Description: Structure probing data (2A3 and DMS) for a 177-nucleotide construct. For 2A3, 1,357 sequencing reads were counted. The RNA was probed in 150 mM KOAc, 10 mM MgCl2 and 150 mM bicine (pH 8.5) at 24 C. The data come from the RNA Mapping Database (RMDB), library RFM100. The DMS profile rests on 747 reads. For 2A3 the reverse transcriptase was SuperScript II with manganese. Reactivities are given for positions 27 through 126.
[RMDB]
RNA sequence: GGGAACGACUCGAGUAGAGUCGAAAAUGCCUAACCCUUAUAACCUAAAGGAUAUAAGGUAUGGCUCAUAUCCACUGCGACAUAGAGACGGCGUCUCUACCUACCACAUGUCGCAGUGGUCCUAUCCUUACGAGCUGUGCUUCGGCACAGCUCGUAAAAAAGAAACAACAACAACAAC
Reactivity to 2A3 in 0.01 (KOAc 150mM, MgCl2 10mM, bicine 150mM(pH8.5), 24C), signal-to-noise 3, nucleotides 027 to 126: u200g000c000c000u000a020a030c000c020c000u000u000a030u020a000a070c070c040u210a250a100a040g060g000a000u000a000u000a010a020g030g000u050a020u110g000g000c020u030c060a100u050a020u010c010c000a000c000u000g000c010g000a000c020a000u080a030g010a000g010a000c120g300g150c140g020u000c000u000c030u050a080c010c040u050a080c000c020a100c010a120u010g020u000c000g010c000a000g000u000g000g010u000c000c000u100a130u040c010c000
Reactivity to DMS in 0.01 (KOAc 150mM, MgCl2 10mM, bicine 150mM(pH8.5), 24C), signal-to-noise 1, nucleotides 027 to 126: u070g000c010c000u000a120a140c300c000c040u000u000a000u000a000a000c000c000u000a000a110a140g130g080a030u000a000u000a040a000g000g010u000a300u000g000g000c030u060c300a000u070a070u000c000c000a080c000u000g000c000g000a010c000a000u040a120g040a010g000a000c040g000g030c300g000u000c030u000c000u000a120c180c000u000a100c000c000a040c220a000u040g000u000c000g010c000a100g030u000g000g080u000c050c030u000a120u000c050c020